[RMDB]
RNA sequence: GGGAACGACUCGAGUAGAGUCGAAAAGUCACGACGGCUGUCAUGACAAGGGCAGGACCGGCCCCGGUCCUGGUGUCGCUGCCCCCGCCGACAUGCUCGGGUGGGUCCGCUCGAGCGCCGUUAGCUCUCACCUACUAAGGUUCGCCUUAGUAGGUGAAAAAGAAACAACAACAACAAC
Reactivity to 2A3 in 0.01 (KOAc 150mM, MgCl2 10mM, bicine 150mM(pH8.5), 24C), signal-to-noise 3, nucleotides 027 to 126: g040u020c010a000c070g040a010c000g100g220c210u240g000u080c010a050u050g050a030c030a070a090g040g000g010c010a020g000g040a060c030c040g060g040c050c050c020c030g010g080u090c000c040u050g030g030u020g000u000c030g010c100u090g040c010c000c000c000c000g060c020c020g010a040c000a080u110g000c010u000c000g000g020g000u070g010g050g080u090c090c010g010c000u030c030g010a020g020c020g030c040c000g050u060u060a040g010c020u010c000
Reactivity to DMS in 0.01 (KOAc 150mM, MgCl2 10mM, bicine 150mM(pH8.5), 24C), signal-to-noise 4, nucleotides 027 to 126: g000u000c030a050c060g010a040c040g010g030c180u020g010u000c010a050u000g010a030c040a120a120g020g010g020c010a030g010g020a030c110c020g000g010c170c080c130c060g010g000u000c020c050u000g010g020u000g000u000c030g020c070u010g000c020c010c010c030c030g010c180c020g000a020c040a080u000g020c020u000c020g010g000g010u000g000g000g010u000c050c020g010c010u010c030g000a030g000c000g020c080c050g000u000u000a070g010c040u000c080

An RNA of 177 nucleotides, treated with 2A3 and DMS and read out base by base. Values are in units of 0.01, from 0 to 300, in steps of 10. For DMS, 7,513 sequencing reads were counted.